Chemical mapping of a 177-nucleotide RNA with 2A3 and DMS. Values cover nucleotides 27 to 126. For 2A3, 767 sequencing reads were counted. Conditions: 150 mM KOAc, 10 mM MgCl2 and 150 mM bicine (pH 8.5), 24 C.

RNA sequence: GGGAACGACUCGAGUAGAGUCGAAAACUAAUGGUGAGGUGGGAACUUGACAAUAUGAGCAUGGGUUAAGUCUCUUGGUUCAAUGAGGUGUGCUUCUCAAUAAUUCUACAUAACAAGCGGGGUUAAGCCGUGAGACAUAGUUCGCUAUGUCUCACGGAAAAGAAACAACAACAACAAC
Reactivity to 2A3 in 0.01 (KOAc 150mM, MgCl2 10mM, bicine 150mM(pH8.5), 24C), signal-to-noise 1, nucleotides 027 to 126: c040u100a100a080u140g070g020u110g010a080g010g060u100g090g000g000a060a050c030u050u080g000a010c040a000a150u160a130u300g070a030g050c010a030u050g000g000g130u060u060a110a170g130u010c000u000c010u070u060g000g000u090u000c050a090a000u150g030a020g030g050u020g050u050g020c000u090u060c000u000c010a030a020u180a030a010u110u000c000u020a060c000a060u110a020a180c010a040a000g000c010g000g000g000g000u050u090a000a000g030
Reactivity to DMS in 0.01 (KOAc 150mM, MgCl2 10mM, bicine 150mM(pH8.5), 24C), signal-to-noise 1, nucleotides 027 to 126: c040u000a050a070u010g010g030u000g000a040g000g050u020g030g000g020a100a100c050u000u010g010a060c120a080a130u000a100u000g000a060g000c070a080u020g000g010g010u010u010a040a070g000u000c020u000c030u020u010g010g020u020u040c110a020a110u030g000a100g020g000u000g020u000g010c040u000u000c030u000c040a080a130u010a050a040u010u010c050u010a090c140a030u010a040a080c200a080a080g000c020g000g000g020g000u000u020a080a060g000